[RMDB]
RNA sequence: GGGAACGACUCGAGUAGAGUCGAAAAGAUAUGGAUAGCAGCCACUUCCCGUAACAGCAACAGCGUAUGGAUCGGAAACGAUCUUUACGACAUGCUGGAGAAGGGAAGUGGCUGCUAUCCUAAGUCACCUUCAACAUAGGUUCGCCUAUGUUGAAGGAAAAGAAACAACAACAACAAC
Reactivity to DMS in 0.01 (KOAc 150mM, MgCl2 10mM, bicine 150mM(pH8.5), 24C), signal-to-noise 2, nucleotides 027 to 126: g010a050u000a300u000g000g000a000u000a000g000c000a010g020c000c010a020c010u000u000c000c000c010g010u010a170a260c000a000g000c020a010a130c270a300g000c010g020u020a000u000g010g000a000u000c000g010g000a170a100a190c020g020a000u000c000u000u050u000a020c000g000a030c160a240u000g010c060u000g000g000a090g040a090a190g010g000g010a010a040g040u000g030g010c000u000g020c000u000a010u000c000c000u000a000a040g000u000c030a230
Structure probing data (DMS) for a 177-nucleotide construct. For DMS the reverse transcriptase was MarathonRT. The reactions ran in a buffer of 150 mM KOAc, 10 mM MgCl2 and 150 mM bicine (pH 8.5), at 24 C. Reactivities are rounded to 0.1 and cut off at 0 and 3.